[RMDB]
RNA sequence: GGGAACGACUCGAGUAGAGUCGAAAAAGCUCCAGUCUCAGCCAAUCACUUAGCUUCCCAUAACAAGUCUAACUGGCUCAGAAGAGCUAGCUGUGCCGCAAUAAAACCACAUGGAGGAGAUAUCCCACCAUACAUGAUACUUCGGUAUCAUGUAUGGAAAAGAAACAACAACAACAAC
Reactivity to 2A3 in 0.01 (KOAc 150mM, MgCl2 10mM, bicine 150mM(pH8.5), 24C), signal-to-noise 5, nucleotides 027 to 126: a000g050c010u000c010c010a030g070u000c030u040c040a020g010c020c020a050a070u050c030a020c080u050u060a020g030c000u050u020c010c010c000a040u050a060a020c070a050a030g030u000c010u030a030a040c030u050g020g010c010u010c030a300g070a300a030g000a090g010c010u020a010g020c010u030g040u040g050c020c020g020c020a040a050u100a150a090a020a010c030c020a030c020a080u070g040g010a040g010g040a040g010a000u080a040u060c000c000c000a010
Reactivity to DMS in 0.01 (KOAc 150mM, MgCl2 10mM, bicine 150mM(pH8.5), 24C), signal-to-noise 4, nucleotides 027 to 126: a090g000c040u000c040c020a070g000u000c030u000c090a070g010c000c030a110a100u010c100a060c050u000u000a070g020c130u010u000c030c010c030a110u000a080a090c140a070a080g010u010c040u010a050a110c040u010g010g020c010u000c020a130g020a140a120g010a030g010c010u000a020g010c040u000g030u000g020c060c050g020c090a060a060u010a030a050a070a080c070c060a060c090a060u010g010g020a050g000g010a060g010a100u000a080u000c000c000c010a220

This 177-nucleotide RNA was probed chemically with 2A3 and DMS.
For DMS, 2,768 sequencing reads were counted.
The 2A3 profile rests on 6,335 reads.